[RMDB]
RNA sequence: GGGAACGACUCGAGUAGAGUCGAAAAGGCGUCUUCGCUGCCUCGGCCGCCAUGCACUGACCGGUAGCCGCCGUAAUCGCGGCAUUGUUCCCAUAAAAGGAUGUGGGUGUGGGUGCCGAAGUAGCAGCCACCUAGCUAUAUUCGUAUAGCUAGGUGGAAAAGAAACAACAACAACAAC
Reactivity to DMS in 0.01 (KOAc 150mM, MgCl2 10mM, bicine 150mM(pH8.5), 24C), signal-to-noise 9, nucleotides 027 to 126: g010g010c110g010u000c060u000u010c140g010c010u000g000c010c030u000c020g010g010c020c060g020c010c010a050u000g010c020a040c020u000g010a150c040c030g010g010u000a120g010c010c010g020c010c100g010u000a110a080u010c300g000c010g010g010c000a100u010u010g000u000u000c010c000c000a140u010a050a050a110a130g010g000a150u010g010u000g010g000g030u000g020u010g000g010g010u000g010c000c010g010a020a030g020u000a030g020c020a210g010
Reactivity to 2A3 in 0.01 (KOAc 150mM, MgCl2 10mM, bicine 150mM(pH8.5), 24C), signal-to-noise 9, nucleotides 027 to 126: g090g030c060g110u050c070u150u110c110g010c010u010g010c010c000u000c000g010g010c030c030g030c020c010a090u070g010c010a020c070u080g100a080c030c020g020g050u070a040g010c000c010g000c010c010g060u100a060a050u190c070g000c000g010g010c000a010u030u200g010u040u020c020c000c000a020u180a020a140a010a010g090g020a070u140g040u130g180g010g000u020g010u040g020g030g040u080g000c000c000g000a010a000g000u020a010g010c010a000g010
Source information:
Structure probing data (DMS and 2A3) for a 177-nucleotide construct. It was measured as part of the RMDB library OK2TRN. For DMS, 36,600 sequencing reads were counted.